[RMDB]
RNA sequence: GGGAACGACUCGAGUAGAGUCGAAAAGGUAGUGCGAGAUGCUGUUUGGCCGGUAUUAGCAUCGUCGUAUGACCGGCCUUUUGCGACGAGUCCAAGGACGAGGCUGCGAAGCAGUCGAGCACUACGAGGGAUGGUCGGUGUUCGCAUCGACUAUCCCAAAAGAAACAACAACAACAAC
Reactivity to 2A3 in 0.01 (KOAc 150mM, MgCl2 10mM, bicine 150mM(pH8.5), 24C), signal-to-noise 9, nucleotides 027 to 126: g140g000u000a000g000u000g000c000g010a030g000a030u060g020c020u020g080u170u200u120g020g000c000c000g000g010u060a100u120u170a090g090c050a090u080c060g230u070c040g020u150a050u110g030a020c000c000g000g000c000c000u050u060u040u070g020c010g010a030c010g010a020g010u000c030c020a060a130g130g010a020c030g020a040g040g000c080u070g010c060g030a030a010g000c010a030g190u040c000g000a010g000c000a000c000u000a000c000g000a100
Reactivity to DMS in 0.01 (KOAc 150mM, MgCl2 10mM, bicine 150mM(pH8.5), 24C), signal-to-noise 9, nucleotides 027 to 126: g020g020u000a010g020u010g000c000g000a280g010a080u010g000c020u000g000u010u020u000g010g010c010c010g000g010u010a060u020u030a140g020c030a110u030c220g020u040c090g010u020a050u030g010a030c010c010g020g000c000c000u000u010u000u010g000c030g000a080c010g000a280g000u000c010c040a100a240g030g000a030c010g000a280g010g000c080u010g020c010g010a070a060g010c000a030g020u020c000g010a300g010c010a020c000u000a010c010g000a130
This 177-nucleotide RNA was probed chemically with 2A3 and DMS. 2A3 adducts were read by reverse transcription with SuperScript II with manganese. As a SHAPE reagent, 2A3 marks flexible, mostly unpaired nucleotides at the ribose 2'-OH. For DMS the reverse transcriptase was MarathonRT. The 2A3 profile rests on 65,123 reads.